[RMDB]
RNA sequence: GGGAACGACUCGAGUAGAGUCGAAAACCGGAGCCUGGCAUCAGCUAGAGGGAUCUACCGAUGGGUUCGGUCGCGGGACUCGUCGGGACACCAACCGCGACUGGGAUCGUCAUCCUGGCUAGUUCGCGUGAUCAGGAGAUCCGAGUAGAGGCAUAGCGUCUAGCUAUACCUUCGGGUAUAGCUAGACAAAAGAAACAACAACAACAAC
Reactivity to DMS in 0.01 (KOAc 150mM, MgCl2 10mM, bicine 150mM(pH8.5), 24C), signal-to-noise 1, nucleotides 027 to 156: c020c020g010g000a130g020c000c010u000g000g000c000a100u000c050a090g000c000u000a070g020a300g000g010g000a060u000c070u000a160c060c020g020a040u000g000g050g030u000u000c010g010g000u000c040g000c000g020g010g000a100c050u000c060g040u000c000g010g020g020a070c130a080c020c030a050a110c010c000g000c010g000a050c040u010g010g010g000a030u000c060g030u010c080a190u000c010c000u010g010g000c020u000a060g010u000u010c030g040c090g010u020g010a100u000c010a070g030g000a140g020a140u000c000c000g030a100g000u000a040g000a080g010g020c050a110u000a130g030c130
Reactivity to 2A3 in 0.01 (KOAc 150mM, MgCl2 10mM, bicine 150mM(pH8.5), 24C), signal-to-noise 3, nucleotides 027 to 156: c010c000g030g030a020g130c010c030u010g000g020c010a050u040c050a110g010c030u030a030g010a070g080g020g010a030u060c050u170a140c040c030g020a020u050g060g020g030u010u040c020g020g010u000c020g000c020g030g010g050a050c040u020c050g050u050c020g020g010g040a000c030a020c030c060a080a030c030c010g010c010g010a020c010u050g080g000g000a060u030c030g040u040c020a020u010c000c000u050g080g070c010u040a020g050u060u090c090g000c040g140u040g020a130u030c010a010g030g010a030g020a030u000c010c000g000a010g000u140a010g020a040g020g070c080a110u090a050g090c080

Source information
This 207-nucleotide RNA was probed chemically with DMS and 2A3. DMS adducts were read by reverse transcription with MarathonRT. For DMS, 3,009 sequencing reads were counted. The RNA was probed in 150 mM KOAc, 10 mM MgCl2 and 150 mM bicine (pH 8.5) at 24 C. Source: RMDB library RSTRND, as collected in RNAgym.